[RMDB]
RNA sequence: GGGAACGACUCGAGUAGAGUCGAAAAUCAUCUAUCCCAGCCGAACCCUCUGGAAUGGGGGGCCAAAGCGGGUGAGAGCCCCGUAGGUGAAAGGAGAUGGUGAUCUAUCCGGCACCUGAGUAGGGCAUACCCCUCCACCAUUCGUGGUGGAGGGGUAAAAAGAAACAACAACAACAAC
Reactivity to DMS in 0.01 (KOAc 150mM, MgCl2 10mM, bicine 150mM(pH8.5), 24C), signal-to-noise 1, nucleotides 027 to 126: u000c030a020u010c000u010a200u000c000c010c000a300g020c020c000g000a010a090c020c000c000u020c020u010g020g040a300a080u020g000g000g010g000g000g010c040c000a110a140a110g000c090g000g000g000u020g010a190g000a060g030c000c000c000c010g030u020a180g000g010u000g010a030a210a090g000g010a060g000a100u010g010g020u000g000a080u000c050u010a180u020c000c000g000g040c020a020c000c000u000g020a170g020u020a220g000g000g030c080a130